The data come from the RNA Mapping Database (RMDB), library OK1LIB. Structure probing data (DMS and 2A3) for a 177-nucleotide construct. Reactivities are given for positions 27 through 126. Conditions: 150 mM KOAc, 10 mM MgCl2 and 150 mM bicine (pH 8.5), 24 C.
RNA sequence: GGGAACGACUCGAGUAGAGUCGAAAAACAUGGCAGUGACAUACACCGGAAAACCGUAGAGAUACGGUCUGCCUUGUAGUCGGUGUACAGGAGGUGCAAGCCUGUCGUUAGGUAAUGUCGUACGCUGAGAUAUAUUGUUAUUCGUAACAAUAUAUCUAAAAGAAACAACAACAACAAC
Reactivity to DMS in 0.01 (KOAc 150mM, MgCl2 10mM, bicine 150mM(pH8.5), 24C), signal-to-noise 9, nucleotides 027 to 126: a090c010a000u000g000g000c000a000g000u000g000a000c010a010u000a000c000a010c000c000g000g000a010a070a110a060c000c010g010u000a000g000a230g000a190u000a000c000g000g000u000c040u000g010c030c030u010u020g010u010a050g010u020c010g010g010u000g000u000a040c060a080g010g010a090g000g010u010g020c140a070a150g000c010c010u000g000u010c090g010u010u000a060g010g010u010a090a090u020g010u000c040g000u010a040c050g010c020u000g000
Reactivity to 2A3 in 0.01 (KOAc 150mM, MgCl2 10mM, bicine 150mM(pH8.5), 24C), signal-to-noise 6, nucleotides 027 to 126: a000c010a010u010g010g010c000a010g010u000g010a000c000a000u020a010c010a010c000c000g020g010a020a050a010a010c000c000g000u000a000g020a000g010a050u010a010c000g000g000u000c000u000g010c000c000u000u090g040u020a020g010u000c020g000g000u010g000u010a020c010a020g010g030a020g030g050u090g010c030a020a020g010c000c000u010g040u040c050g020u020u050a020g000g040u060a050a030u070g010u020c020g010u020a010c030g000c020u020g010